Chemical mapping of a 177-nucleotide RNA with 2A3. The reactions ran in a buffer of 150 mM KOAc, 10 mM MgCl2 and 150 mM bicine (pH 8.5), at 24 C. For 2A3 the reverse transcriptase was SuperScript II with manganese. Reactivities are given for positions 27 through 126. The 2A3 profile rests on 272 reads. The data come from the RNA Mapping Database (RMDB), library OK1LIB.
RNA sequence: GGGAACGACUCGAGUAGAGUCGAAAAGCUAUUUAGCGAACGUAGUUAUUUCGCAGACGCUCAUAUUAGCAUUAUUUGGUACGGCAUUUGGCUUACUGUUAACAGGCGUUACAGGUGCAUUUUUACCGGGGCCUGAGUAAUUCGUUACUCAGGCCCCAAAAGAAACAACAACAACAAC
Reactivity to 2A3 in 0.01 (KOAc 150mM, MgCl2 10mM, bicine 150mM(pH8.5), 24C), signal-to-noise 1, nucleotides 027 to 126: g000c000u090a080u120u070u110a020g000c000g050a020a000c000g060u050a000g050u290u110a150u050u180u140c000g080c000a000g000a110c050g030c000u050c090a090u110a150u100u070a060g000c090a000u000u000a030u300u110u300g060g000u030a000c020g000g000c000a000u070u000u110g050g000c050u000u120a020c200u300g170u100u000a170a040c030a050g050g000c030g000u080u000a000c000a060g000g010u000g000c090a200u000u180u180u180u090a080c060c000